[RMDB]
RNA sequence: GGGAACGACUCGAGUAGAGUCGAAAAGCAAACUUUGAAAUGCCUUUUUACCUCAUAUUUCAGAAUGCGUGUGCCUAUGCAUUCAUAAUGGAGAGAGAUGAUAAAGGUUCUCAGUUGCAUUAAAACUGUCGUUGCUACAUUUCGAUGUAGCAACGACAAAAGAAACAACAACAACAAC
Reactivity to 2A3 in 0.01 (KOAc 150mM, MgCl2 10mM, bicine 150mM(pH8.5), 24C), signal-to-noise 3, nucleotides 027 to 126: g030c060a030a050a070c040u090u090u020g030a020a020a070u210g010c000c000u000u010u020u020u200a120c010c000u030c000a070u140a190u190u050u060c090a030g000a000a010u020g010c000g000u120g090u130g190c060c050u120a030u030g000c000a010u000u030c000a000u130a060a090u030g030g000a010g000a000g000a050g030a090u160g010a000u110a070a000a020g000g000u050u020c000u000c000a000g000u000u000g000c030a020u030u160a050a030a060a070c120u020

Chemical mapping of a 177-nucleotide RNA with 2A3. Source: RMDB libraries RFM100 and RFMREP, as collected in RNAgym. For 2A3 the reverse transcriptase was SuperScript II with manganese. Reactivities are rounded to 0.1 and cut off at 0 and 3.